Source information:
Structure probing data (2A3 and DMS) for a 177-nucleotide construct. The reactions ran in a buffer of 150 mM KOAc, 10 mM MgCl2 and 150 mM bicine (pH 8.5), at 24 C. As a SHAPE reagent, 2A3 marks flexible, mostly unpaired nucleotides at the ribose 2'-OH. For 2A3, 1,783 sequencing reads were counted.
[RMDB]
RNA sequence: GGGAACGACUCGAGUAGAGUCGAAAAGGAUCGAUCGUAUCGGGCCGGUAUCCACAAAGGCCAAGGAUGACCGCGCGGUCGGUGGCAUGGCCGAUGCCGGUAUAGGCAAGCGAACCGUGCAGGCUGAUAAAUCACUCAGGUUCGCCUGAGUGAUUUAAAAAGAAACAACAACAACAAC
Reactivity to 2A3 in 0.01 (KOAc 150mM, MgCl2 10mM, bicine 150mM(pH8.5), 24C), signal-to-noise 1, nucleotides 027 to 126: g060g020a060u020c020g000a020u030c030g030u090a020u120c010g030g000g000c020c000g030g030u040a050u000c010c010a040c090a070a150a000g070g000c010c010a040a020g030g020a040u120g090a090c000c020g060c010g010c040g100g000u080c000g000g030u060g040g000c010a030u020g060g040c000c020g020a010u040g020c020c030g020g040u220a170u130a100g010g000c030a010a050g110c030g030a050a100c040c000g000u010g060c030a000g070g000c030u020g040a040
Reactivity to DMS in 0.01 (KOAc 150mM, MgCl2 10mM, bicine 150mM(pH8.5), 24C), signal-to-noise 4, nucleotides 027 to 126: g010g000a040u000c030g010a030u010c040g030u010a300u010c030g010g000g010c040c000g000g020u000a030u010c000c090a120c160a080a120a180g010g030c010c020a130a120g000g010a080u000g000a050c000c010g010c300g020c070g010g000u000c000g020g000u000g010g000c030a040u000g000g020c090c010g010a100u010g000c020c020g000g010u000a030u010a100g000g000c020a060a100g010c050g010a060a060c020c010g010u000g000c030a120g010g000c050u000g000a140

For DMS the reverse transcriptase was MarathonRT.